[RMDB]
Conditions: 150 mM KOAc, 10 mM MgCl2 and 150 mM bicine (pH 8.5), 24 C. Structure probing data (DMS and 2A3) for a 170-nucleotide construct. For DMS the reverse transcriptase was MarathonRT. For DMS, 4,693 sequencing reads were counted.
RNA sequence: GGGAACGACUCGAGUAGAGUCGAAAAUUGAAGGUAAAACAGCCUGUGGGUGAAACACACCCACAGGGCCCAUGGGGCGCUAGCACUCUGGUAUCACGGUACCCUUGUGCGCCUGUUUUACCGAAGGCCAGGUCUCCCUUCGGGGAGACCAAAAGAAACAACAACAACAAC
Reactivity to DMS in 0.01 (KOAc 150mM, MgCl2 10mM, bicine 150mM(pH8.5), 24C), signal-to-noise 1, nucleotides 027 to 129: u070u070g010a000a000g010g020u020a040a000a000a070c010a000g000c000c010u000g010u030g000g010g010u100g040a040a120a150c260a230c020a040c000c030c000a000c030a030g020g000g010c000c050c000a010u050g000g120g000g000c020g030c040u050a030g050c000a020c000u000c000u030g020g030u000a030u020c030a110c260g040g010u000a000c000c010c090u000u000g000u000g050c010g040c000c010u000g020u030u050u000u000a010c000c020g020a090a030g000g020c020c020a080
Reactivity to 2A3 in 0.01 (KOAc 150mM, MgCl2 10mM, bicine 150mM(pH8.5), 24C), signal-to-noise 2, nucleotides 027 to 129: u080u110g030a110a030g000g000u000a000a010a000a000c010a010g000c000c000u000g000u000g000g010g010u000g070a030a060a020c060a020c020a000c040c000c020a020c000a000g000g000g000c010c000c000a020u150g000g150g000g070c060g000c080u110a040g000c020a010c000u030c000u000g000g000u000a020u010c010a020c150g070g000u000a010c000c000c000u000u000g000u000g000c000g000c000c000u020g000u000u000u000u000a010c010c000g000a000a000g030g010c000c030a010